[RMDB]
RNA sequence: GGGAACGACUCGAGUAGAGUCGAAAAGAGAUCUGAACCCAAGCUGCCGAGUGACCCUGCAAGGGGGCCCAGCCAGGGGGCUGUGUCUUCUGGUCCCGCUGACGGUGAUACCCUCGGGCAUGGGGUGAUUCUACCAUCAAUUCGUUGAUGGUAGAAUAAAAGAAACAACAACAACAAC
Reactivity to DMS in 0.01 (KOAc 150mM, MgCl2 10mM, bicine 150mM(pH8.5), 24C), signal-to-noise 9, nucleotides 027 to 126: g010a130g000a090u010c040u000g010a120a140c010c010c010a080a100g010c040u000g010c040c030g010a050g010u000g010a140c060c010c010u000g010c180a110a060g000g000g000g010g000c300c030c040a100g010c020c020a060g010g010g000g010g010c020u000g010u010g010u010c070u000u000c050u000g010g000u000c010c010c010g000c030u000g010a140c110g000g010u000g000a130u000a150c060c050c000u000c020g010g000g010c020a060u010g010g000g000g010u010g000
Reactivity to 2A3 in 0.01 (KOAc 150mM, MgCl2 10mM, bicine 150mM(pH8.5), 24C), signal-to-noise 4, nucleotides 027 to 126: g050a000g000a080u060c020u110g070a090a100c010c000c010a020a040g040c040u150g050c020c020g030a030g060u060g020a070c010c010c010u020g010c040a040a040g030g020g000g010g010c020c030c010a010g010c020c010a040g030g030g040g040g000c050u110g040u060g020u180c050u170u040c050u130g020g020u070c000c010c000g090c030u010g020a040c040g000g040u060g020a090u170a180c020c000c020u010c010g000g000g010c010a030u080g010g000g000g020u050g020